Structure probing data (DMS and 2A3) for a 207-nucleotide construct. The RNA was probed in 150 mM KOAc, 10 mM MgCl2 and 150 mM bicine (pH 8.5) at 24 C. DMS adducts were read by reverse transcription with MarathonRT. For DMS, 4,107 sequencing reads were counted. 2A3 adducts were read by reverse transcription with SuperScript II with manganese.

[RMDB]
RNA sequence: GGGAACGACUCGAGUAGAGUCGAAAAGCGUACUACUACGAGGUCUACUGGAGGCUAUGUCGAUUUGUCCCAAAUAGGACAAAUCCUCAUAGCCGUUGAAAGUAGACUCCCCACCGUAGUAUCGCAAAACUAUAACUGUCUUCGGACAGUUAUAGAAUCAGUACAAGAACUUCGGUUCUUGUACUGAAAAAGAAACAACAACAACAAC
Reactivity to DMS in 0.01 (KOAc 150mM, MgCl2 10mM, bicine 150mM(pH8.5), 24C), signal-to-noise 2, nucleotides 027 to 156: g020c020g040u000a040c040u010a020c000u010a160c130g010a110g000g000u000c000u000a030c010u010g000g000a190g040g010c010u000a000u000g030u000c040g010a020u000u000u000g010u000c020c000c020a060a100a300u010a070g000g010a010c000a000a010a010u010c000c020u010c000a000u010a010g030c000c000g000u000u000g000a150a130a060g010u010a000g000a010c010u000c040c050c020c060a280c150c160g030u000a030g020u000a010u000c040g000c020a090a060a070a170c010u000a000u000a000a000c000u010g010u000c000u010u000c300g020g000a010c000a000g030u000u010a000u010a000g010a120a120
Reactivity to 2A3 in 0.01 (KOAc 150mM, MgCl2 10mM, bicine 150mM(pH8.5), 24C), signal-to-noise 3, nucleotides 027 to 156: g000c010g050u100a080c020u000a000c000u010a010c030g020a010g030g000u000c000u000a000c000u010g010g050a000g030g000c000u000a000u000g020u010c000g000a000u000u000u010g010u020c000c010c050a190a180a120u270a100g000g000a010c020a010a010a000u010c020c000u010c020a030u010a000g000c000c000g020u000u010g000a010a030a000g010u000a000g000a000c000u030c000c010c010c010a040c040c010g000u000a000g020u000a030u300c020g000c020a030a000a040a080c000u000a000u010a010a000c000u000g000u000c000u030u040c230g090g010a000c000a000g000u000u000a000u000a000g000a000a040